[RMDB]
An RNA of 177 nucleotides, treated with 2A3 and DMS and read out base by base. The data come from the RNA Mapping Database (RMDB), library RFM100.
RNA sequence: GGGAACGACUCGAGUAGAGUCGAAAACCCCGGCAGACAGCGCGAUCUCGCGUGUUGCCCGAAAGGGAAUCGGGUUAAGAUUUCCCGAGCCGGGACGUGGCGGUUGACGGCGACGUUAGGAAGUCCGCGUGACAAAUCCCUUCGGGGAUUUGUCACGAAAAGAAACAACAACAACAAC
Reactivity to 2A3 in 0.01 (KOAc 150mM, MgCl2 10mM, bicine 150mM(pH8.5), 24C), signal-to-noise 1, nucleotides 027 to 126: c090c000c000c000g000g000c000a070g010a210c040a030g060c000g060c060g000a290u060c040u040c090g000c000g000u060g030u060u210g020c010c050c000g060a010a010a000g050g010g000a020a110u010c000g000g030g070u100u150a140a010g110a050u070u040u110c000c000c010g000a000g020c010c000g000g020g000a010c010g010u060g040g000c000g010g110u030u060g020a060c050g030g020c110g010a060c050g070u030u030a050g000g110a040a000g010u110c030c000g000
Reactivity to DMS in 0.01 (KOAc 150mM, MgCl2 10mM, bicine 150mM(pH8.5), 24C), signal-to-noise 1, nucleotides 027 to 126: c030c010c000c070g020g000c050a280g000a010c070a100g010c000g020c040g040a210u020c190u000c080g000c070g040u000g000u010u000g000c040c000c000g040a100a070a200g000g000g020a090a090u000c000g030g010g010u060u020a120a110g000a090u000u000u000c000c000c010g000a120g030c030c000g050g030g000a110c020g040u000g000g000c050g000g000u070u010g000a020c000g000g010c230g000a250c000g000u000u000a070g020g000a180a020g000u010c020c100g010
The RNA was probed in 150 mM KOAc, 10 mM MgCl2 and 150 mM bicine (pH 8.5) at 24 C.
Values cover nucleotides 27 to 126.